Structure probing data (2A3 and DMS) for a 177-nucleotide construct. For 2A3 the reverse transcriptase was SuperScript II with manganese. Conditions: 150 mM KOAc, 10 mM MgCl2 and 150 mM bicine (pH 8.5), 24 C. For 2A3, 1,702 sequencing reads were counted. Values cover nucleotides 27 to 126. It was measured as part of the RMDB library M2PK90.

[RMDB]
RNA sequence: GGGAACGACUCGAGUAGAGUCGAAAAAUUCAGGAGAGUAGAUGAUUCGCGUUAAGUGUGUGUGAAUGGGAUGUCGUCACACAACGAAGCGAGAGCGCGGUCAAUCAUUGCAUCCGCUCCAAACGAACCGAAGGGAUAACUUCGGUUAUCCCUUCGGAAAAGAAACAACAACAACAAC
Reactivity to 2A3 in 0.01 (KOAc 150mM, MgCl2 10mM, bicine 150mM(pH8.5), 24C), signal-to-noise 2, nucleotides 027 to 126: a000u090u060c040a030g000g020a010g010a000g060u210a070g030a050u020g000a000u110u160c020g000c030g020u060u080a220a000g050u080g000u000g010u000g000u010g130a050a000u010g020g030g020a010u000g090u180c040g030u000c000a010c000a000c000a020a030c040g020a110a040g070c050g080a100g040a000g090c000g020c000g000g030u050c040a010a020u020c020a040u000u060g010c010a010u000c020c000g000c000u020c030c000a090a120a000c050g040a080a060
Reactivity to DMS in 0.01 (KOAc 150mM, MgCl2 10mM, bicine 150mM(pH8.5), 24C), signal-to-noise 2, nucleotides 027 to 126: a190u000u020c050a120g000g000a020g020a070g010u010a110g010a020u000g000a030u000u000c010g010c010g030u000u000a060a090g010u010g020u020g020u000g010u000g000a060a030u010g010g000g020a060u010g010u020c140g000u000c000a000c000a010c000a040a040c040g000a120a120g020c170g010a120g010a080g010c010g000c010g020g000u010c140a090a050u010c030a030u000u000g020c010a020u000c000c010g010c010u000c020c010a060a080a100c130g000a070a110
For DMS, 2,238 sequencing reads were counted.